RNA sequence: GGGAACGACUCGAGUAGAGUCGAAAAGAGAGCGCACAGUAUAUGGACCUGUACGCCUCGCAGGAGUUUGAAGAGAUAGUCAAGCUCACAAAGCAGAGAGUCGACGAGCUCUACCGGCGAAUCAACAAUUGACACUGGAGAUGAUGAAAUCAAGAAGCACCGAGAGGUGGUUCGCCACCUCUCGGUGAAAAGAAACAACAACAACAAC
Reactivity to 2A3 in 0.01 (KOAc 150mM, MgCl2 10mM, bicine 150mM(pH8.5), 24C), signal-to-noise 1, nucleotides 027 to 156: g050a000g010a030g000c000g000c000a010c000a000g040u040a140u070a100u300g030g000a050c000c030u030g010u010a010c030g010c010c010u110c050g000c050a030g050g100a010g010u010u010u010g030a060a010g130a030g010a080u080a060g110u000c000a000a020g030c010u030c000a060c000a020a130a050g020c050a000g010a010g000a000g040u100c100g070a080c020g000a050g000c000u030c020u030a070c010c010g000g000c000g030a020a020u040c010a040a120c020a100a020u140u140g010a050c010a010c090u050g080g070a060g070a020u270g000a010u150g030a010a050a030u220c030a030a060g230a050a000g080

The record gives the reactivity of an RNA of 207 nucleotides to 2A3. For 2A3 the reverse transcriptase was SuperScript II with manganese. Values cover nucleotides 27 to 156. Values are in units of 0.01, from 0 to 300, in steps of 10.